[RMDB]
About this RNA: This 177-nucleotide RNA was probed chemically with DMS and 2A3. For DMS, 2,925 sequencing reads were counted.
RNA sequence: GGGAACGACUCGAGUAGAGUCGAAAAAUUCGGCCACGCAGUACGGCUGAUGGCGGCCUCGGGCCCGCGUGAGGGCUUCGUUCAGAAUCGAUGCUCCAAUGGCGUCGUAGGGGUUGUCAUGCCCCGGCCAUGACUAGCCUUUCGAGGCUAGUCAUGGAAAAGAAACAACAACAACAAC
Reactivity to DMS in 0.01 (KOAc 150mM, MgCl2 10mM, bicine 150mM(pH8.5), 24C), signal-to-noise 3, nucleotides 027 to 126: a170u000u010c010g020g020c010c010a130c140g020c080a160g030u000a100c220g020g020c010u010g000a060u000g000g030c030g010g000c040c020u000c060g020g010g010c020c000c010g020c270g000u010g010a130g010g000g000c000u000u000c030g000u000u010c160a130g000a120a120u010c020g020a020u000g010c000u010c110c160a120a070u010g000g010c020g000u010c010g020u010a040g010g010g000g010u000u000g010u000c100a050u010g010c040c010c000c080g020g020
Reactivity to 2A3 in 0.01 (KOAc 150mM, MgCl2 10mM, bicine 150mM(pH8.5), 24C), signal-to-noise 2, nucleotides 027 to 126: a000u140u060c010g020g010c020c010a020c050g070c050a060g090u220a050c080g030g000c010u020g020a040u010g020g000c020g020g000c020c040u010c030g000g040g020c010c040c000g030c060g090u130g080a160g030g000g000c060u050u100c030g030u160u180c090a070g090a090a060u050c010g010a010u020g010c020u110c120c070a140a120u190g050g000c010g000u040c010g000u090a070g000g000g010g000u040u030g100u050c010a010u100g000c010c000c000c020g000g000

Source information
It was measured as part of the RMDB library OK2TRN. The RNA was probed in 150 mM KOAc, 10 mM MgCl2 and 150 mM bicine (pH 8.5) at 24 C.